The record gives the reactivity of an RNA of 207 nucleotides to 2A3. High 2A3 reactivity points to a flexible backbone, as in loops and unpaired stretches. The reactions ran in a buffer of 150 mM KOAc, 10 mM MgCl2 and 150 mM bicine (pH 8.5), at 24 C.
RNA sequence: GGGAACGACUCGAGUAGAGUCGAAAAAAGAGUUUCUCUGUUCUCUAAAAUAAAAACAGAGUGGUGGAGUCAUUAUGACCCUCUUAGAGUUUCCAGUUUCCCUAAAAAACUGGUGGCGAGCCUGCUCAAAAUCAUUAGACCUUCGGGUCUAAUGAAACCAAUACGUAAGGUUCGCCUUACGUAUUGGAAAAGAAACAACAACAACAAC
Reactivity to 2A3 in 0.01 (KOAc 150mM, MgCl2 10mM, bicine 150mM(pH8.5), 24C), signal-to-noise 2, nucleotides 027 to 156: a000a000g010a010g000u010u010u010c000u010c000u000g010u010u000c000u020c000u050a110a220a100a060u150a040a000a080a050a010c000a000g010a020g000u010g020g020u010g020g010a220g010u000c010a040u010u230a050u300g020a000c000c030c000u000c020u040u130a050g000a000g240u030u000u000c000c000a000g010u010u010u080c090c030c010u160a100a080a000a000a000a000c010u010g030g000u010g090g010c030g010a010g120c010c090u110g000c020u080c160a090a140a030a080u020c000a000u000u000a000g000a000c000c020u010u090c300g080g000g000u000c000u000a000a000u000g010a000a010a000
For 2A3 the reverse transcriptase was SuperScript II with manganese.